[RMDB]
The record gives the reactivity of an RNA of 177 nucleotides to 2A3. For 2A3, 1,160 sequencing reads were counted. For 2A3 the reverse transcriptase was SuperScript II with manganese. Values cover nucleotides 27 to 126. The reactions ran in a buffer of 150 mM KOAc, 10 mM MgCl2 and 150 mM bicine (pH 8.5), at 24 C.

RNA sequence: GGGAACGACUCGAGUAGAGUCGAAAAACGGAGGUGCUACGGCACCUCCGAAACUGAGGUCCUCAAAACUGAGGGGCAUUUUCUGUGGUUUGAAAGGAAAGUGCACCCAGUUUUGGGGAUGUCAAAAGUGGUGACUACGAUUCGUCGUAGUCACCACAAAAGAAACAACAACAACAAC
Reactivity to 2A3 in 0.01 (KOAc 150mM, MgCl2 10mM, bicine 150mM(pH8.5), 24C), signal-to-noise 2, nucleotides 027 to 126: a000c000g030g000a000g000g000u000g040c050u090a060c230g080g040c030a000c020c020u000c000c000g000a000a000a000c000u020g000a000g040g000u000c000c000u000c000a010a030a000a000c000u010g010a170g010g000g000g000c000a000u000u000u000u020c060u040g210u120g090g280u110u230u300g300a180a140a000g010g000a020a000a000g000u010g000c010a040c000c000c000a020g000u000u000u000u000g000g000g000g000a000u000g020u030c010a060a000a000a060